[RMDB]
RNA sequence: GGGAACGACUCGAGUAGAGUCGAAAAAACGCAGACGAUAAUUUCGCGAUAGCAGCCUAGUUGCUGCUCGUCCCUCUUAGUCCUCCUGCCGACUAAGACUGGACGUCAUUAUGCAGGGAACUACUUUAGGGGUGUCUCGACCUGAAGUAGAUUAAUUUCCGUAUAUUCACUUCGGUGAAUAUACGGAAAAAGAAACAACAACAACAAC
Reactivity to 2A3 in 0.01 (KOAc 150mM, MgCl2 10mM, bicine 150mM(pH8.5), 24C), signal-to-noise 1, nucleotides 027 to 156: a020a000c100g010c150a040g080a090c050g060a090u110a090a260u300u270u170c090g020c050g020a010u060a000g010c010a000g020c000c000u240a140g040u190u190g000c000u020g030c030u030c000g030u000c020c000c000u000c000u000u030a000g000u010c000c000u050c010c010u040g070c010c120g010a000c000u000a040a000g010a010c010u010g000g000a000c000g000u040c010a050u060u300a060u300g000c010a000g000g000g070a030a120c000u010a000c020u000u000u000a000g010g000g010g000u080g010u010c000u030c050g050a010c000c000u000g030a010a000g000u000a010g000a040u040u100a090a100u010u010
The data come from the RNA Mapping Database (RMDB), library ARCHII. Chemical mapping of a 207-nucleotide RNA with 2A3. Conditions: 150 mM KOAc, 10 mM MgCl2 and 150 mM bicine (pH 8.5), 24 C. For 2A3 the reverse transcriptase was SuperScript II with manganese. High 2A3 reactivity points to a flexible backbone, as in loops and unpaired stretches. The 2A3 profile rests on 651 reads.